[RMDB]
RNA sequence: GGGAACGACUCGAGUAGAGUCGAAAAGACUGAGAACGUCGUCCGCGCUGCAGAGGCGAAUGGUGUCUCACAUCUUAUUCAGAUCAGUGCGCUUGGAGCAGAUCCUGACGGAUCAACGGCAUACAUUCAGGCGAAAGGACGUGCUGAGACCGCUGUCAGCUCAAAUAUUGUUCGCAAUAUUUGAGCUAAAAGAAACAACAACAACAAC
Reactivity to 2A3 in 0.01 (KOAc 150mM, MgCl2 10mM, bicine 150mM(pH8.5), 24C), signal-to-noise 8, nucleotides 027 to 156: g020a000c050u060g020a010g020a130a040c030g030u000c000g030u030c030c020g020c010g000c030u170g020c090a080g050a100g130g080c040g020a020a040u100g090g030u080g060u030c030u020c020a040c010a050u020c020u090u140a120u160u120c030a020g050a120u040c010a060g060u030g080c030g020c050u070u160g080g020a060g010c040a030g000a020u020c010c040u100g100a080c110g010g000a010u020c040a040a060c060g080g000c030a030u090a150c020a060u090u080c030a030g050g000c010g040a090a050a030g070g020a020c040g030u060g010c020u020g010a030g020a070c000c040g020c040u060g090u150c070
Reactivity to DMS in 0.01 (KOAc 150mM, MgCl2 10mM, bicine 150mM(pH8.5), 24C), signal-to-noise 3, nucleotides 027 to 156: g010a110c100u000g020a090g000a070a070c030g000u010c010g010u000c010c010g030c020g040c050u000g030c120a130g020a190g040g010c030g000a040a040u010g040g010u010g020u000c030u000c030a040c130a100u000c080u000u000a130u010u000c050a150g000a110u000c030a070g000u010g020c020g020c050u010u000g030g000a120g030c060a120g020a040u000c010c010u000g010a210c300g040g020a070u000c040a040a080c040g020g000c040a100u010a090c080a090u010u000c030a080g000g010c030g020a060a110a170g000g000a080c000g010u000g020c000u000g010a180g000a030c020c030g020c030u000g010u000c040